[RMDB]
RNA sequence: GGGAACGACUCGAGUAGAGUCGAAAAACGGUGGCUACGGCCACCGAAAUCCAUUGCCCUACUCUUCGCAUCUCAUCACUUCGUCCAAUACCAUAGGGAUGAGAUCGUUCAGUACGGCAAUGGACAAGGUGUUGCGUGAGUUCGCUCACGCAACACCAAAAGAAACAACAACAACAAC
Reactivity to 2A3 in 0.01 (KOAc 150mM, MgCl2 10mM, bicine 150mM(pH8.5), 24C), signal-to-noise 2, nucleotides 027 to 126: a000c010g000g010u010g060g030c010u030a050c300g060g000c010c000a000c000c000g020a000a050a030u000c000c010a000u000u000g020c000c000c000u000a000c010u000c040u050u000c020g000c080a000u000c000u000c000a000u000c000a010c090u050u030c040g140u000c070c070a150a170u150a220c030c030a150u200a030g000g000g000a000u020g000a000g000a000u000c030g000u010u010c000a000g000u000a000c000g010g000c000a000a000u000g000g000a000c010a000a040